[RMDB]
RNA sequence: GGGAACGACUCGAGUAGAGUCGAAAACACAUCUACUUCCAUCCGGCGACCGGCGCGCACGCCAUCCCGCACGGCGGCCUGUUCGAGGCGUACAGCUCGCGGCGUUGGGAGCGCGGCGAACUCGGCUAUCCGGUGCGUGACUUCACCAAGCUCGCCGGGUAGGCACAAUGUUCGCAUUGUGCCUACCAAAAGAAACAACAACAACAAC
Reactivity to 2A3 in 0.01 (KOAc 150mM, MgCl2 10mM, bicine 150mM(pH8.5), 24C), signal-to-noise 3, nucleotides 027 to 156: c170a010c010a070u130c140u230a110c050u070u040c010c000a040u060c030c030g000g000c010g050a050c030c000g090g030c000g020c010g010c020a020c120g110c000c010a030u030c020c000c010g000c000a030c020g060g010c010g010g060c000c020u120g080u270u200c140g140a020g010g050c000g110u170a200c050a030g010c000u060c070g020c000g080g020c140g040u030u060g000g000g010a060g010c000g000c000g030g000c020g000a000a000c040u070c080g080g000c030u060a080u170c030c060g020g000u040g050c050g080u050g110a150c010u070u050c060a040c060c010a010a020g010c010u020c010g000c000c000g000